Conditions: 150 mM KOAc, 10 mM MgCl2 and 150 mM bicine (pH 8.5), 24 C. This 177-nucleotide RNA was probed chemically with DMS and 2A3. DMS adducts were read by reverse transcription with MarathonRT.

RNA sequence: GGGAACGACUCGAGUAGAGUCGAAAAGCUUGAGAUUGCCCGCGAUCUGGCGCGCAACCGUGCCUGAGGAUCCGACGGGAACCGAAACGAUGACGAGAUCGGCAUCUUUCACGGCCUCGGCGCUGUACGAGUAGUCGAUGUUCGCAUCGACUACUCGAAAAGAAACAACAACAACAAC
Reactivity to DMS in 0.01 (KOAc 150mM, MgCl2 10mM, bicine 150mM(pH8.5), 24C), signal-to-noise 1, nucleotides 027 to 126: g000c010u000u000g050a000g040a170u000u000g000c010c000c030g010c030g010a050u000c070u000g010g000c020g040c060g050c250a150a100c250c060g000u020g000c040c040u000g000a070g000g030a060u010c040c060g010a150c050g040g010g000a060a130c070c040g000a080a020a110c130g010a050u030g000a030c040g000a260g000a200u030c010g010g000c020a030u010c020u000u000u000c020a140c090g000g030c300c020u010c060g010g020c030g000c130u000g010u000a150
Reactivity to 2A3 in 0.01 (KOAc 150mM, MgCl2 10mM, bicine 150mM(pH8.5), 24C), signal-to-noise 1, nucleotides 027 to 126: g020c080u130u180g020a040g020a080u120u140g110c030c040c010g000c020g030a030u010c040u220g010g000c000g020c010g050c080a040a070c220c020g020u070g000c020c000u100g110a110g000g020a000u000c020c030g090a110c050g080g000g000a040a030c060c010g030a040a000a050c110g060a080u060g110a030c050g020a010g010a300u220c010g020g040c020a030u010c000u040u080u060c070a030c060g050g010c020c020u060c020g000g030c040g000c030u020g000u030a030